Chemical mapping of a 177-nucleotide RNA with 2A3 and DMS.

[RMDB]
RNA sequence: GGGAACGACUCGAGUAGAGUCGAAAAGCUCAGGACAACAUUUUCAAGAUGGAAAAUGUUUUUGACUUAUGUAGCUGUGAUCAAAUUUUCGCAGCCACGGUUAAGUCAAAAGUAUGUUUCAUCUUAGUUAAAGCCCAGAUUUCGAUCUGGGCUUUAAAAAAGAAACAACAACAACAAC
Reactivity to 2A3 in 0.01 (KOAc 150mM, MgCl2 10mM, bicine 150mM(pH8.5), 24C), signal-to-noise 2, nucleotides 027 to 126: g000c000u000c020a040g080g050a030c000a130a000c000a070u030u070u160u200c040a030a040g000a000u000g010g000a010a000a000a020u000g000u000u000u000u000u000g000a010c000u010u010a000u130g030u060a000g010c020u000g010u010g010a020u150c100a120a290a290u130u120u050u040c000g000c010a000g000c000c000a010c000g140g010u040u050a010a000g000u000c000a000a000a000a000g000u010a000u050g080u000u000u000c000a000u000c000u010u000a030g010
Reactivity to DMS in 0.01 (KOAc 150mM, MgCl2 10mM, bicine 150mM(pH8.5), 24C), signal-to-noise 2, nucleotides 027 to 126: g010c040u000c030a170g020g000a070c130a090a050c120a110u020u010u000u030c100a040a000g010a010u010g000g000a000a030a030a000u000g000u010u000u000u010u000g000a000c000u010u000a040u020g020u000a040g000c000u010g020u010g000a030u020c300a070a080a200u020u000u010u020c010g010c000a010g000c010c040a000c000g050g010u030u000a000a000g000u000c000a010a000a010a020g000u020a000u000g000u000u000u000c010a010u010c010u000u000a080g020

For 2A3, 738 sequencing reads were counted. The data come from the RNA Mapping Database (RMDB), library RFM100.